[RMDB]
RNA sequence: GGGAACGACUCGAGUAGAGUCGAAAACCGAGGUGACGCUCGUCCUCCUUCGGAUGCCCAGGUCGGACCGCGAGGAGGUGGAGAUGCCAUGCCGACCCGAAGAGGAAAGAAGGACGCGAGACGCAAAACACCCUCAGGUUCGCCUGAGGGAAAAGAAACAACAACAACAAC
Reactivity to DMS in 0.01 (KOAc 150mM, MgCl2 10mM, bicine 150mM(pH8.5), 24C), signal-to-noise 7, nucleotides 027 to 129: c040c020g000a070g070g000u040g040a060c080g060c020u050c090g040u030c010c020u010c020c030u000u000c040g070g010a140u020g000c000c020c040a130g000g000u040c050g000g030a100c050c070g000c080g050a040g020g030a050g000g070u030g000g000a060g000a090u060g000c080c030a010u000g000c000c000g000a000c020c030c060g030a060a060g020a060g040g060a060a080a100g020a000a000g020g030a020c300g030c090g000a040g010a090c090g040c000a080a030a100a080c170a160
Reactivity to 2A3 in 0.01 (KOAc 150mM, MgCl2 10mM, bicine 150mM(pH8.5), 24C), signal-to-noise 9, nucleotides 027 to 129: c000c000g020a070g010g030u110g010a030c030g030c060u060c050g090u050c010c020u030c010c000u060u050c010g090g020a110u160g050c010c010c020a010g060g050u060c030g000g020a060c020c010g010c040g040a070g030g020a030g000g030u030g030g020a140g010a050u200g050c020c010a050u120g010c000c000g010a020c000c000c010g050a070a040g040a050g020g000a040a030a020g020a010a000g000g000a020c030g010c000g030a050g020a040c020g010c060a030a070a040a020c060a080